[RMDB]
RNA sequence: GGGAACGACUCGAGUAGAGUCGAAAAGGGGUCAGAUUAUUGGAGCCUGAGUGGAGCUUGGAUUUAUACAGCUGAAGCCUCCACGGCUGUAUUGUCAGCUCCACCAGGCUCAGGAUCUGACGGAGGCACCCAAAACGGAACUCUUCGGAGUUCCGAACUAGGAAGUAAACUUCGGUUUACUUCCUAGAAAAGAAACAACAACAACAAC
Reactivity to 2A3 in 0.01 (KOAc 150mM, MgCl2 10mM, bicine 150mM(pH8.5), 24C), signal-to-noise 2, nucleotides 027 to 156: g090g000g010g010u000c010a000g020a020u020u070a130u230u300g230g030a020g020c000c000u020g010a050g020u000g010g000a010g000c060u120u100g140g020a040u090u300u140a010u030a010c000a000g000c010u020g060a140a030g020c020c050u000c040c010a010c020g000g000c000u010g000u000a000u000u020g010u040c090a030g000c020u010c000c000a000c000c000a050g000g000c040u000c000a000g000g000a000u000c000u000g000a000c000g010g000a000g000g000c020a060c010c010c000a070a010a020a040c010g010g000a000a000c000u010c000u130u160c300g110g010a000g010u000u000c000c000g010a000a020
Reactivity to DMS in 0.01 (KOAc 150mM, MgCl2 10mM, bicine 150mM(pH8.5), 24C), signal-to-noise 1, nucleotides 027 to 156: g020g040g030g000u000c010a010g000a080u000u010a080u020u010g040g020a070g000c010c000u010g010a150g050u000g020g000a040g020c030u000u000g040g000a060u000u000u000a030u000a030c000a020g030c000u000g000a090a130g030c020c010u030c010c050a300c050g000g000c000u000g000u020a030u000u000g020u000c030a050g000c010u000c000c000a020c000c000a010g000g000c000u000c000a000g000g010a020u000c010u000g020a000c000g000g000a100g070g050c020a110c000c000c000a050a040a090a260c020g000g000a020a020c000u000c000u000u000c300g050g000a040g010u000u030c000c000g020a000a020